[RMDB]
RNA sequence: GGGAACGACUCGAGUAGAGUCGAAAACAGCACUUGAGACGCCGGAUGUCGCCGCACAGCGCGAUGCCGGUGGACGGACCGAGACGGUUGACCUGACGAUUUACGUGAGCGCUGUUUCGGUAUCAUCAGUCGCGCUUACCGAUAGCGGGGACGCGGGGGUACGCGUGUCGUUCGCGACACGCGUACCAAAAGAAACAACAACAACAAC
Reactivity to DMS in 0.01 (KOAc 150mM, MgCl2 10mM, bicine 150mM(pH8.5), 24C), signal-to-noise 1, nucleotides 027 to 156: c020a100g000c030a070c050u020u000g000a110g000a080c020g010c030c030g000g020a110u000g030u000c020g010c050c000g050c070a190c100a090g000c020g040c010g020a050u000g010c030c040g000g060u000g020g000a140c040g000g000a030c010c000g000a060g000a090c020g010g040u000u010g020a080c030c020u010g040a040c030g030a300u010u010u000a050c050g050u000g000a060g010c030g000c000u000g000u000u000u000c010g050g010u010a040u000c060a070u000c030a180g000u010c030g020c000g080c010u000u000a300c010c040g000a140u010a070g000c010g010g000g010g000a060c020g000c050g020g000g010
Reactivity to 2A3 in 0.01 (KOAc 150mM, MgCl2 10mM, bicine 150mM(pH8.5), 24C), signal-to-noise 6, nucleotides 027 to 156: c030a020g070c060a030c080u120u180g060a050g030a090c040g080c060c010g120g090a250u120g010u020c050g050c200c010g000c010a090c050a100g010c020g000c010g020a010u030g080c090c090g010g020u030g010g010a010c060g040g050a000c000c000g010a000g000a000c010g000g030u170u300g100a190c000c040u060g020a020c020g080a140u050u170u300a150c030g010u020g110a000g000c000g000c000u000g000u000u000u010c000g000g010u010a030u080c020a020u000c010a020g020u020c010g000c000g000c040u040u110a130c060c060g150a160u110a080g030c030g000g000g030g010a010c010g000c020g050g020g010
Notes:
This 207-nucleotide RNA was probed chemically with DMS and 2A3. The RNA was probed in 150 mM KOAc, 10 mM MgCl2 and 150 mM bicine (pH 8.5) at 24 C. 2A3 adducts were read by reverse transcription with SuperScript II with manganese.